[RMDB]
RNA sequence: GGGAACGACUCGAGUAGAGUCGAAAAAGGUGGAUGAUAUCAUCUCCAUUUCACAGAAGCAGAAGCAAUAGUCACGUUUAUGGAGCAACUACUAUGUGCUCAGAUAUGUUAAGGGUUUUACAUCAAGCAUCUCAUUUAAUCCUCAUAACAACCCUCACCAUGGCAGUCGGUUCGCCGACUGCCAUGGAAAAGAAACAACAACAACAAC
Reactivity to 2A3 in 0.01 (KOAc 150mM, MgCl2 10mM, bicine 150mM(pH8.5), 24C), signal-to-noise 1, nucleotides 027 to 156: a000g070g020u070g030g040a080u070g020a020u060a110u160c030a060u020c060u000c000c010a040u050u090u040c100a130c010a060g030a040a020g060c020a050g030a090a000g030c020a040a020u020a090g080u070c060a030c090g020u090u090u090a150u100g060g000a030g140c000a120a000c030u130a010c030u000a060u180g100u050g000c000u020c060a020g040a010u240a040u090g000u170u030a090a060g090g040g000u000u000u000u130a030c030a090u080c050a020a000g010c020a020u000c030u020c130a070u000u140u070a040a010u040c000c020u040c040a070u040a080a000c030a050a000c000c010c000u000c000a000